[RMDB]
RNA sequence: GGGAACGACUCGAGUAGAGUCGAAAAGAUAUGGAUCCGAUAAGCAGAGUCGUCGAGGAUCUCGGAAACGAGGGAGACGCGACUGCUUUUGACGGAUCCUAAGUCAAAAGAGAUCUUCGGAUCUCAACUGUUAUGUUACGUUCGCGUAACAUAACAGAAAAGAAACAACAACAACAAC
Reactivity to DMS in 0.01 (KOAc 150mM, MgCl2 10mM, bicine 150mM(pH8.5), 24C), signal-to-noise 4, nucleotides 027 to 126: g010a050u000a300u010g000g000a000u010c000c000g010a140u000a010a030g000c010a030g000a240g000u010c010g020u010c000g020a060g010g000a170u020c000u000c000g000g000a120a080a220c010g000a010g010g000g000a290g020a010c000g020c040g020a080c010u000g000c010u000u000u010u000g010a180c090g000g000a020u000c020c000u010a020a110g010u010c030a040a030a120a110g020a040g000a010u000c000u000u020c170g020g000a010u000c000u000c000a030a090
Reactivity to 2A3 in 0.01 (KOAc 150mM, MgCl2 10mM, bicine 150mM(pH8.5), 24C), signal-to-noise 4, nucleotides 027 to 126: g020a010u070a040u180g000g010a000u000c000c010g030a080u040a070a000g000c010a000g020a050g220u300c030g000u030c010g040a190g070g000a020u000c000u010c010g000g040a060a050a020c010g000a010g000g020g000a030g010a010c000g020c010g120a160c010u000g000c000u000u020u060u130g230a080c020g000g010a010u000c000c000u000a020a010g020u020c040a010a010a160a060g020a010g000a000u000c000u080u140c300g130g000a000u020c000u020c010a000a040
The record gives the reactivity of an RNA of 177 nucleotides to DMS and 2A3.
The RNA was probed in 150 mM KOAc, 10 mM MgCl2 and 150 mM bicine (pH 8.5) at 24 C.
For 2A3, 9,196 sequencing reads were counted.